[RMDB]
The record gives the reactivity of an RNA of 177 nucleotides to DMS and 2A3. DMS adducts were read by reverse transcription with MarathonRT. Source: RMDB library 15KREP, as collected in RNAgym.

RNA sequence: GGGAACGACUCGAGUAGAGUCGAAAAUACAGCGAGACUGGUAGUGAUCUUCUUUACCAACCACCCAACUGUAGCAUAACCUCUGGCGUGUUGCAAAGCGGUUUGGUGAAAAUGUCACAUCCCAGUGGUUCUGUCUAAGGUUCGCCUUAGACAGAACAAAAGAAACAACAACAACAAC
Reactivity to DMS in 0.01 (KOAc 150mM, MgCl2 10mM, bicine 150mM(pH8.5), 24C), signal-to-noise 1, nucleotides 027 to 126: u010a080c060a060g040c060g010a080g060a130c040u000g020g020u010a210g000u010g020a030u000c190u010u000c120u000u000u000a030c000c000a000a010c050c090a050c010c030c060a140a060c260u010g030u000a030g000c000a020u000a130a160c020c070u000c220u000g010g030c240g010u000g010u020u000g020c020a000a070a040g000c060g000g000u000u010u000g000g000u000g020a000a000a000a060u000g000u000c060a000c010a170u010c220c010c000a060g010u000g000
Reactivity to 2A3 in 0.01 (KOAc 150mM, MgCl2 10mM, bicine 150mM(pH8.5), 24C), signal-to-noise 1, nucleotides 027 to 126: u140a010c030a000g050c020g040a080g050a090c000u010g000g030u030a050g000u030g010a010u030c030u030u030c000u050u030u010a010c000c000a010a010c060c030a000c000c000c000a010a080c070u010g010u000a000g020c010a000u030a100a150c020c040u200c160u210g020g030c040g030u000g010u000u000g020c010a050a000a010g030c110g020g010u030u070u080g000g000u000g010a000a000a020a000u030g000u000c000a000c000a050u060c010c000c010a010g010u020g040
The 2A3 profile rests on 1,566 reads. Conditions: 150 mM KOAc, 10 mM MgCl2 and 150 mM bicine (pH 8.5), 24 C.